[RMDB]
The record gives the reactivity of an RNA of 207 nucleotides to DMS and 2A3. For 2A3 the reverse transcriptase was SuperScript II with manganese.
RNA sequence: GGGAACGACUCGAGUAGAGUCGAAAAGGCAGUAGAGGGUGAGGAUUCAGCCCACCAUGGGCUGGACUGUCUGGCCCCAGAGCGCACUCAUUUCUCUCUUCAAUUGAUUCAUCAAGUAUAUGGUGAGCACUUGUCAUGUACCUGGAAGGUGUUAGAAACCAUCACUGACUUUCGAGUCAGUGAUGGUAAAAGAAACAACAACAACAAC
Reactivity to DMS in 0.01 (KOAc 150mM, MgCl2 10mM, bicine 150mM(pH8.5), 24C), signal-to-noise 1, nucleotides 027 to 156: g040g050c020a120g000u010a090g010a080g000g010g030u000g010a160g000g020a190u010u000c020a020g000c000c000c300a130c150c300a090u010g010g000g080c000u020g010g010a020c040u010g080u000c040u000g000g040c020c000c000c020a140g020a140g030c020g040c060a080c010u000c040a060u000u010u010c030u000c010u000c030u000u000c050a100a100u020u020g000a110u010u000c060a120u000c030a040a060g050u010a110u020a070u020g000g060u010g000a100g000c130a070c090u000u000g000u000c010a010u010g000u020a030c030c030u000g020g010a090a080g020g030u000g020u000u010a090g010a160a180
Reactivity to 2A3 in 0.01 (KOAc 150mM, MgCl2 10mM, bicine 150mM(pH8.5), 24C), signal-to-noise 2, nucleotides 027 to 156: g040g030c040a020g050u170a020g010a080g040g010g010u030g060a040g020g010a030u030u020c000a000g000c040c020c000a080c110c070a060u280g000g000g000c010u000g000g000a000c010u020g040u080c020u010g120g010c000c000c000c000a030g010a010g020c080g010c010a060c020u050c020a020u020u110u020c020u000c000u000c010u090u100c080a040a100u010u150g070a130u090u040c010a020u000c020a090a060g100u070a150u020a070u190g010g010u030g000a010g020c010a000c050u030u060g020u060c010a040u040g020u030a050c030c020u020g030g030a100a060g030g000u020g020u030u080a040g020a080a030
For 2A3, 1,488 sequencing reads were counted. The reactions ran in a buffer of 150 mM KOAc, 10 mM MgCl2 and 150 mM bicine (pH 8.5), at 24 C. The data come from the RNA Mapping Database (RMDB), library OK3TST. Reactivities are given for positions 27 through 156.